RNA sequence: GGGAACGACUCGAGUAGAGUCGAAAAGAAGGCGCUCCUGGUCAUUCUGGAUGGCCACGUGUGCACUCCACACACAUUCCGCCAUGUCAUGCACAUUCUGCUGCAGUGCCUCCGCGUCAGGGAGCUCGCUGACAGAUCUAUUCGUAGAUCUGUCAGCAAAAGAAACAACAACAACAAC
Reactivity to DMS in 0.01 (KOAc 150mM, MgCl2 10mM, bicine 150mM(pH8.5), 24C), signal-to-noise 3, nucleotides 027 to 126: g010a080a090g010g000c050g000c010u000c040c030u000g020g010u000c130a040u000u030c160u000g010g020a080u010g000g000c010c090a070c140g020u000g020u000g020c060a120c050u000c040c040a200c030a030c040a040c030a180u000u010c080c130g000c010c050a040u000g000u010c080a050u000g010c020a030c140a120u020u020c080u000g000c060u000g020c020a050g020u000g000c070c020u000c040c020g010c100g020u000c070a040g000g020g010a060g010c170u010c100
Reactivity to 2A3 in 0.01 (KOAc 150mM, MgCl2 10mM, bicine 150mM(pH8.5), 24C), signal-to-noise 2, nucleotides 027 to 126: g050a030a060g050g000c040g040c030u030c000c030u050g020g020u040c030a060u100u080c090u210g140g080a020u000g040g000c030c020a010c010g030u010g000u010g000c040a030c040u030c010c010a000c000a000c000a000c000a070u160u010c020c000g030c010c020a060u090g070u080c040a060u170g000c030a030c020a080u180u080c060u100g030c040u040g010c020a010g020u000g070c020c020u030c010c030g080c030g100u060c020a030g010g070g000a030g010c060u060c050